RNA sequence: GGGAACGACUCGAGUAGAGUCGAAAAUGUCUCCUUUAUAUCACAACUGAAAGGGCUUAUAGAACAAUUACCACUAAAGGAGCAGAAAAUUUUAAAGUCUUCAGUGCAUUGAAGUGGACUGUGUAAAUCUAUAGAAACACUUCGGUGUUUCUAUAGAAAAAGAAACAACAACAACAAC
Reactivity to 2A3 in 0.01 (KOAc 150mM, MgCl2 10mM, bicine 150mM(pH8.5), 24C), signal-to-noise 2, nucleotides 027 to 126: u080g000u000c050u060c070c040u060u030u030a160u020a060u150c020a090c000a290a000c050u100g040a040a030a110g090g020g000c050u090u120a120u080a300g080a050a010c000a090a080u080u030a070c000c020a040c070u040a200a070a030g000g010a000g050c010a000g190a030a250a070a060u200u210u150u210a140a100a020g020u000c000u010u050c000a050g020u040g020c070a080u000u090g000a060a000g020u010g080g000a010c030u000g030u030g020u170a090a060a100
Reactivity to DMS in 0.01 (KOAc 150mM, MgCl2 10mM, bicine 150mM(pH8.5), 24C), signal-to-noise 3, nucleotides 027 to 126: u000g010u000c010u000c130c010u000u000u010a030u010a040u010c150a100c100a300a070c050u000g000a060a080a100g030g000g000c000u000u000a120u000a060g000a080a070c080a100a080u000u000a080c040c000a060c100u010a060a080a090g000g000a080g000c100a100g000a060a020a090a100u000u010u000u010a050a070a050g020u010c010u000u010c030a010g010u000g010c130a070u000u000g000a040a080g010u010g010g000a050c050u000g010u010g000u010a070a060a110